[RMDB]
RNA sequence: GGGAACGACUCGAGUAGAGUCGAAAAGAGGGCAAAACACAAGAUGAGCGAUUGACGAGCUCGUUCGUUUAACGAAUAGUGUAGGGGAGAGUAAGAAGCCAUCCCAUCAGUUAGUAAGUAGGGUAAGGUAGUUGUUAACGUUCGCGUUAACAACUACAAAAGAAACAACAACAACAAC
Reactivity to DMS in 0.01 (KOAc 150mM, MgCl2 10mM, bicine 150mM(pH8.5), 24C), signal-to-noise 2, nucleotides 027 to 126: g010a120g020g000g040c070a080a070a100a100c060a030c030a120a080g010a080u010g000a030g000c010g000a140u000u010g000a080c110g030a230g020c090u000c020g010u000u000c030g010u000u020u000a080a050c100g010a050a020u030a060g030u010g010u000a050g000g000g010g010a120g010a110g010u020a050a040g000a070a080g000c020c020a090u000c000c010c010a130u010c070a000g000u000u030a050g010u000a040a070g020u000a060g040g000g000u000a070a080g000
Reactivity to 2A3 in 0.01 (KOAc 150mM, MgCl2 10mM, bicine 150mM(pH8.5), 24C), signal-to-noise 1, nucleotides 027 to 126: g090a040g030g010g000c040a020a020a120a000c030a010c030a000a070g090a140u060g000a020g000c000g070a080u050u150g150a050c080g030a030g010c010u000c010g000u000u010c020g000u000u110u160a120a030c020g020a040a020u060a060g050u030g030u030a030g000g010g020g010a120g010a020g030u020a080a020g020a030a010g040c040c020a040u010c030c010c000a050u060c010a020g040u050u140a080g040u080a150a110g020u030a060g070g000g020u020a050a030g040
Structure probing data (DMS and 2A3) for a 177-nucleotide construct. Values cover nucleotides 27 to 126. The RNA was probed in 150 mM KOAc, 10 mM MgCl2 and 150 mM bicine (pH 8.5) at 24 C. For DMS the reverse transcriptase was MarathonRT. Source: RMDB library RFMREP, as collected in RNAgym.